[RMDB]
RNA sequence: GGGAACGACUCGAGUAGAGUCGAAAACCCUUAGAUGUCCUGGGCCGCACGCGUGCUACACUGAUGAGUAGAAUGGGUUAAUACUGCAUUUAUUGCUUUCCCUUGACCGAGAGGUCUGGGUAAUCCUUCAAGGGCUUCAGUUCGCUGAAGCCCUUGAAAAAGAAACAACAACAACAAC
Reactivity to 2A3 in 0.01 (KOAc 150mM, MgCl2 10mM, bicine 150mM(pH8.5), 24C), signal-to-noise 2, nucleotides 027 to 126: c000c000c030u000u090a090g010a050u120g060u050c000c000u030g000g060g020c020c000g000c000a020c000g050c030g030u040g020c000u010a020c040a000c020u190g110a170u060g030a030g060u050a000g080a140a040u100g020g000g010u030u010a080a020u080a210c040u050g000c020a070u000u110u110a130u100u140g030c000u000u030u060c000c020c000u000u100g030a040c010c000g010a040g000a020g090g030u010c000u000g000g010g000u020a020a020u010c020c000u000